Overview: Chemical mapping of a 177-nucleotide RNA with DMS and 2A3. High 2A3 reactivity points to a flexible backbone, as in loops and unpaired stretches. The reactions ran in a buffer of 150 mM KOAc, 10 mM MgCl2 and 150 mM bicine (pH 8.5), at 24 C. For DMS the reverse transcriptase was MarathonRT.

RNA sequence: GGGAACGACUCGAGUAGAGUCGAAAAGAUAUGGAUAGAGGCAACAGCAUGAUGUCGGAAACGACAUACAUGACAUGCCUCGUCCUAAGUCAAAAGGACGAGUUACAGUUCGCUGUAACUCGUCCAAGACGAUCAUAGUGUUCGCACUAUGAUCGUCAAAAGAAACAACAACAACAAC
Reactivity to DMS in 0.01 (KOAc 150mM, MgCl2 10mM, bicine 150mM(pH8.5), 24C), signal-to-noise 2, nucleotides 027 to 126: g000a040u000a220u000g000g000a020u010a070g020a020g030g010c000a020a040c130a090g000c000a010u000g000a030u000g000u010c000g020g010a050a040a100c000g000a000c000a000u020a060c000a000u010g000a060c090a240u000g000c020c000u000c000g000u000c000c000u010a020a120g030u010c030a080a070a140a170g010g000a000c030g010a020g000u000u000a010c000a010g000u000u020c210g020c000u020g000u000a000a010c000u000c000g000u000c000c000a030a020
Reactivity to 2A3 in 0.01 (KOAc 150mM, MgCl2 10mM, bicine 150mM(pH8.5), 24C), signal-to-noise 2, nucleotides 027 to 126: g010a030u040a020u070g020g000a010u130a300g010a010g020g030c020a060a080c100a300g080c000a020u000g000a000u000g010u010c010g020g000a050a000a010c010g040a000c000a000u110a150c000a000u010g070a100c020a050u010g000c010c020u000c010g000u000c010c000u000a060a010g030u000c020a040a000a010a270g020g010a010c020g000a000g000u000u000a000c000a000g010u050u100c190g090c150u000g000u000a000a000c010u010c000g000u020c010c000a000a000